[RMDB]
RNA sequence: GGGAACGACUCGAGUAGAGUCGAAAACAGUGCUGUGUCAACGUCAUUAUUUGUCGACGAUGUACUGAUUGAAUGGGAAAAUCCAUCCGGAUGGAUUAUAGGAUUAGAUUUUGGUGUAUACUCUAUUUUAACUAGUAGAGGCGGUAUCACCGAGGCGCAGCUGACCACUAUUCGUAGUGGUCAGCUGAAAAGAAACAACAACAACAAC
Reactivity to 2A3 in 0.01 (KOAc 150mM, MgCl2 10mM, bicine 150mM(pH8.5), 24C), signal-to-noise 4, nucleotides 027 to 156: c020a020g030u020g010c010u040g010u040g030u240c020a020a050c020g100u060c090a140u030u240a180u220u160u200g080u070c020g000a000c000g020a030u040g010u010a020c030u020g030a140u050u090g060a070a070u140g020g020g080a080a170a000a040u000c000c000a010u000c050c030g170g090a050u070g000g010a000u070u010a110u200a180g040g050a040u070u050a040g050a160u030u070u060u160g020g000u030g020u000a040u030a050c000u000c020u000a090u010u030u010u050a170a120c080u030a030g010u000a000g020a020g060g010c110g080g030u040a010u150c000a020c000c000g000a030g010g030c070g000
Reactivity to DMS in 0.01 (KOAc 150mM, MgCl2 10mM, bicine 150mM(pH8.5), 24C), signal-to-noise 2, nucleotides 027 to 156: c000a100g040u000g020c020u020g020u020g020u000c020a130a070c090g010u000c170a190u010u010a110u000u010u000g070u000c040g030a080c000g020a180u000g000u010a040c040u000g000a180u010u000g010a080a070u000g000g010g000a130a030a060a030u000c000c000a110u000c030c040g040g030a100u010g030g020a130u010u000a080u000a070g020g010a060u000u000a070g020a110u000u010u000u000g020g040u000g020u000a080u000a070c020u000c020u000a040u010u000u000u010a100a160c100u000a060g010u000a030g020a020g030g010c090g000g000u000a060u000c040a050c020c010g000a080g020g010c140g010